[RMDB]
RNA sequence: GGGAACGACUCGAGUAGAGUCGAAAAACGAAGAUGCGGAAAAUGGCAUUGACGACAAUGAAGAUACAACUGCUAGCAAAGAUUCGUCACCAUUUUUAGAUCUGCAGAGUGAACGACAAAAUAAAAAGAUUAUGAGAAACGGGCUUGUUAUUGGAAAGUAGCUAUGGGGAUUCGUCCCCAUAGCUACAAAAGAAACAACAACAACAAC
Reactivity to 2A3 in 0.01 (KOAc 150mM, MgCl2 10mM, bicine 150mM(pH8.5), 24C), signal-to-noise 1, nucleotides 027 to 156: a050c030g000a090a000g030a000u100g060c060g020g040a040a040a020a020u010g000g040c090a090u050u150g000a000c000g040a000c010a030a050u200g000a010a060g030a090u120a210c030a170a160c160u240g010c070u090a130g070c040a130a000a000g050a110u050u040c020g030u030c030a000c000c000a000u000u000u000u000u170a050g010a200u100c060u110g000c000a000g010a000g070u050g090a040a030c010g080a020c030a020a090a000a050u140a130a100a000a000a000g070a030u140u130a030u090g150a130g000a010a000a060c060g000g080g060c010u020u040g030u130u030a120u050u020g010g010a090a080a120
Background:
Structure probing data (2A3) for a 207-nucleotide construct. The reactions ran in a buffer of 150 mM KOAc, 10 mM MgCl2 and 150 mM bicine (pH 8.5), at 24 C. It was measured as part of the RMDB library OK3TST. 2A3 adducts were read by reverse transcription with SuperScript II with manganese. Values cover nucleotides 27 to 156.